Chemical mapping of a 177-nucleotide RNA with 2A3 and DMS.
The RNA was probed in 150 mM KOAc, 10 mM MgCl2 and 150 mM bicine (pH 8.5) at 24 C.
[RMDB]
RNA sequence: GGGAACGACUCGAGUAGAGUCGAAAACUGCCUGCUGGGCCCUAUUGUCUGGGUCUGGGGGCCCUUUCCUGCCCCAUGUGAACUUGAUUCCUCCUCGCGUUUCUGCCGGUGACCAGACAGAGCCUGGGCGAUGACGUCUCUUCGGAGACGUCGUCGCAAAAGAAACAACAACAACAAC
Reactivity to 2A3 in 0.01 (KOAc 150mM, MgCl2 10mM, bicine 150mM(pH8.5), 24C), signal-to-noise 7, nucleotides 027 to 126: c030u040g010c020c000u220g110c010u030g050g000g010c020c000c010u100a180u140u300g150u110c150u060g030g020g000u010c000u030g000g000g000g000g000c020c000c000u050u040u040c010c000u030g040c020c000c000c010a080u120g080u070g120a120a070c040u080u100g040a060u170u040c010c000u020c000c000u020c020g040c010g030u000u080u040c040u050g020c000c000g040g030u060g030a050c010c010a020g030a080c030a040g070a020g010c000c030u040g010g050
Reactivity to DMS in 0.01 (KOAc 150mM, MgCl2 10mM, bicine 150mM(pH8.5), 24C), signal-to-noise 2, nucleotides 027 to 126: c110u020g000c030c000u000g010c060u010g010g000g020c000c020c020u000a100u060u070g000u030c080u000g000g000g040u020c050u010g000g000g000g000g010c000c110c040u030u010u000c000c010u010g000c030c000c020c010a120u020g030u000g000a080a080c120u000u040g020a090u010u000c070c060u030c010c010u000c070g000c070g010u000u010u000c010u000g000c020c020g000g000u000g010a100c030c030a060g000a030c090a090g010a210g020c040c010u010g000g000

2A3 adducts were read by reverse transcription with SuperScript II with manganese.